[RMDB]
RNA sequence: GGGAACGACUCGAGUAGAGUCGAAAAGAGCAUUCGUGCUCGGAAUGACCUUUGUGAGCUGUGGAGACUCUUUAUCGGACGUUGCCCAUUGGGCAACGAGAACCGAUACAGAGUCGUUGAAACAGCUCACUCUGGUGCGCUGCACCUUCGGGUGCAAACGUUUCAAAAAGUUCGCUUUUUGAAACGUAAAAGAAACAACAACAACAAC
Reactivity to DMS in 0.01 (KOAc 150mM, MgCl2 10mM, bicine 150mM(pH8.5), 24C), signal-to-noise 2, nucleotides 027 to 156: g000a060g020c000a100u000u000c280g060u000g030c000u000c010g000g030a100a060u010g030a080c010c000u000u000u000g010u000g000a030g010c000u010g020u040g000g010a300g010a030c000u000c000u000u000u000a010u000c010g000g020a170c010g030u010u000g020c000c010c000a270u000u010g060g030g000c000a000a000c020g000a040g040a160a170c000c000g010a030u000a000c050a030g000a050g040u010c010g020u010u000g000a300a190a040c010a010g000c000u000c010a000c000u000c020u000g020g020u000g010c030g020c120u000g010c000a030c000c020u000u000c300g030g040g010u000g000c010a020a040
Reactivity to 2A3 in 0.01 (KOAc 150mM, MgCl2 10mM, bicine 150mM(pH8.5), 24C), signal-to-noise 2, nucleotides 027 to 156: g000a000g000c010a020u070u100c260g130u110g010c000u010c030g000g010a130a120u200g050a000c000c000u010u000u000g000u000g000a000g000c000u010g000u000g020g020a030g000a020c000u000c000u040u020u010a000u000c000g020g040a060c000g080u000u010g010c000c020c000a060u120u300g010g000g000c010a010a020c000g000a010g010a060a080c000c000g000a000u000a000c020a000g000a010g000u000c000g000u080u010g020a000a000a000c010a000g000c000u000c000a000c000u010c000u000g000g010u040g020c070g010c080u070g000c010a000c000c010u030u090c300g080g000g020u010g000c000a000a010
Chemical mapping of a 207-nucleotide RNA with DMS and 2A3.